[RMDB]
RNA sequence: GGGAACGACUCGAGUAGAGUCGAAAACAUUUCAUGGGAAGUAGUAUUACUCACCAGACGUCAACGAAAUGGAUAUCAGGAAGAUCAUCAGGAUCAUAAUGGCCAGAGUGGAUAGAAUUGCUGAUAUACGCAGUUUGCUCUGGCGGCUGUAGACGUACAUCGGUUGAAAGUUCGCUUUCAACCGAUGAAAAGAAACAACAACAACAAC
Reactivity to DMS in 0.01 (KOAc 150mM, MgCl2 10mM, bicine 150mM(pH8.5), 24C), signal-to-noise 2, nucleotides 027 to 156: c010a090u010u000u000c030a260u020g020g020g010a140a150g010u010a050g000u000a110u000u000a030c010u000c040a230c000c000a070g010a140c080g030u000c080a080a140c070g020a020a080a070u000g000g000a090u000a060u000c060a120g000g000a150a080g020a050u000c050a100u000c140a150g030g020a040u000c030a090u000a030a050u000g020g030c020c020a000g010a040g000u000g010g010a050u000a060g010a070a120u000u000g030c000u000g020a180u000a180u010a150c170g030c020a140g030u000u000u000g030c010u000c050u000g040g030c020g010g000c000u000g000u000a090g000a160c070g000u000a150
Reactivity to 2A3 in 0.01 (KOAc 150mM, MgCl2 10mM, bicine 150mM(pH8.5), 24C), signal-to-noise 4, nucleotides 027 to 156: c010a030u080u170u120c050a060u090g030g020g000a120a050g030u040a020g070u130a140u290u170a050c000u030c070a090c040c000a010g050a040c020g020u100c050a070a050c050g070a090a040a060u100g010g060a040u090a050u120c040a030g120g030a070a050g020a040u020c010a030u050c050a030g160g060a010u030c010a000u170a270a020u170g120g010c000c000a000g010a020g000u060g030g090a130u090a240g100a070a060u040u050g010c010u040g130a200u080a030u020a190c100g000c010a010g000u010u010u060g020c000u010c000u000g000g000c000g000g010c000u010g060u070a030g000a080c010g000u040a010

This 207-nucleotide RNA was probed chemically with DMS and 2A3. For DMS the reverse transcriptase was MarathonRT. The reactions ran in a buffer of 150 mM KOAc, 10 mM MgCl2 and 150 mM bicine (pH 8.5), at 24 C. 2A3 adducts were read by reverse transcription with SuperScript II with manganese. Values cover nucleotides 27 to 156.